[RMDB]
RNA sequence: GGGAACGACUCGAGUAGAGUCGAAAAUCGUGGGGCUUUGCGUUCGCAACGCAUGCUCUGUGGAGUGACGAGGGGAGAGCGAAGACAUGGCUACACACGAUCACAUCCCUCAUUUCAUCUUUCGGGUACGGCAAUCUUGUUUCGACAAGAUUGCCGUAAAAGAAACAACAACAACAAC
Reactivity to 2A3 in 0.01 (KOAc 150mM, MgCl2 10mM, bicine 150mM(pH8.5), 24C), signal-to-noise 2, nucleotides 027 to 126: u020c000g000u000g020g000g000g030c080u080u280u000g020c000g140u000u050c020g010c070a030a000c030g010c070a080u080g000c010u000c000u050g040u020g100g060a010g000u120g010a040c070g050a170g020g050g090g000a100g030a030g050c000g050a000a010g040a010c030a060u120g030g000c010u120a100c160a000c000a000c010g000a000u000c010a010c010a100u030c000c000c000u030c000a070u040u150u040c040a010u030c010u020u020u010c000g000g000g110u030